RNA sequence: GGGAACGACUCGAGUAGAGUCGAAAAGAUAAACCGGACAUAAAGGGUAGAAUUACACGGUUAGUGGAUGCCUAUCUUUCGGAGAGGGUUUCGUCAACGAGAGAUGUUGUCUAUAGUUCUUUGGGUAAUAUAAAGUCUUCAUGCGGAUCUAAGAUAAAGCUAUUAUGUGAUUCGUCACAUAAUAGCUAAAAGAAACAACAACAACAAC
Reactivity to DMS in 0.01 (KOAc 150mM, MgCl2 10mM, bicine 150mM(pH8.5), 24C), signal-to-noise 3, nucleotides 027 to 156: g020a130u000a010a050a110c030c010g020g030a190c080a120u000a070a080a070g020g010g070u000a040g000a120a120u000u010a140c070a040c020g020g020u010u010a110g040u000g010g010a090u000g000c110c020u000a050u020c020u000u010u000c030g030g000a190g010a250g030g010g030u010u000u000c050g000u000c030a060a150c020g010a080g010a070g000a070u010g000u000u010g000u000c030u000a080u000a120g000u000u000c000u000u000u000g010g010g000u000a040a070u000a160u000a040a070a170g000u000c020u010u010c020a110u010g020c050g020g010a070u010c020u000a030a120g010a140u010a060a100
Reactivity to 2A3 in 0.01 (KOAc 150mM, MgCl2 10mM, bicine 150mM(pH8.5), 24C), signal-to-noise 3, nucleotides 027 to 156: g030a000u110a080a090a020c030c050g040g030a040c040a040u220a080a130a030g040g010g010u030a020g060a120a100u150u130a080c050a010c060g170g020u160u140a070g040u050g040g010a010u040g000c010c000u030a080u010c000u020u080u040c050g040g020a020g020a020g060g060g010u060u100u140c050g040u030c010a040a040c030g010a000g000a000g000a070u060g020u080u030g000u010c010u030a100u070a090g050u080u010c000u030u030u030g050g010g010u060a080a100u090a040u070a120a140a020g030u020c010u050u050c020a040u080g010c000g060g000a030u080c050u100a080a040g140a060u300a090a130